[RMDB]
RNA sequence: GGGAACGACUCGAGUAGAGUCGAAAAAGGACAUAGGAGAAGAGGUGGAGUGAGCACUGAACAACAGCACGAUUACUUCAUUGACAUGCUCCCUCUUUUAAAAGAGAUUAGUAAGAAAGGAAAUGACGGUUACAUUGUGAGUGUAGAGAAGCCUCAAACGUCAUUUAUAUUUCGAUAUAAAUGACGUAAAAGAAACAACAACAACAAC
Reactivity to DMS in 0.01 (KOAc 150mM, MgCl2 10mM, bicine 150mM(pH8.5), 24C), signal-to-noise 5, nucleotides 027 to 156: a070g000g000a070c090a110u000a080g020g000a070g000a070a110g010a280g000g030u010g000g010a100g020u000g020a070g040c040a150c040u000g010a090a080c100a080a130c060a090g000c030a070c060g020a150u000u000a030c040u010u000c030a070u000u010g010a150c080a070u000g010c010u000c070c030c000u000c020u000u010u000u010a040a100a070a060g000a080g010a090u010u000a080g010u010a060a100g010a070a060a060g010g010a090a040a060u000g010a050c090g000g000u010u000a070c080a090u000u000g020u000g010a090g030u000g010u000a100g000a120g000a060a100g010c020c010u000c020a050a100
Reactivity to 2A3 in 0.01 (KOAc 150mM, MgCl2 10mM, bicine 150mM(pH8.5), 24C), signal-to-noise 8, nucleotides 027 to 156: a000g040g000a030c050a040u120a030g010g030a040g020a100a020g030a060g030g020u060g010g020a050g020u040g010a020g020c030a030c090u060g070a120a030c050a030a020c010a020g050c060a020c120g060a090u060u110a040c040u040u070c030a060u030u070g060a060c030a050u080g010c010u020c000c030c000u030c030u020u090u040u100a100a190a010a000g030a000g000a020u070u070a030g040u060a090a060g040a110a040a020g020g010a020a060a050u070g020a020c060g020g010u030u040a040c030a060u050u020g020u020g040a030g010u040g010u070a020g010a000g010a080a030g020c030c010u020c010a120a110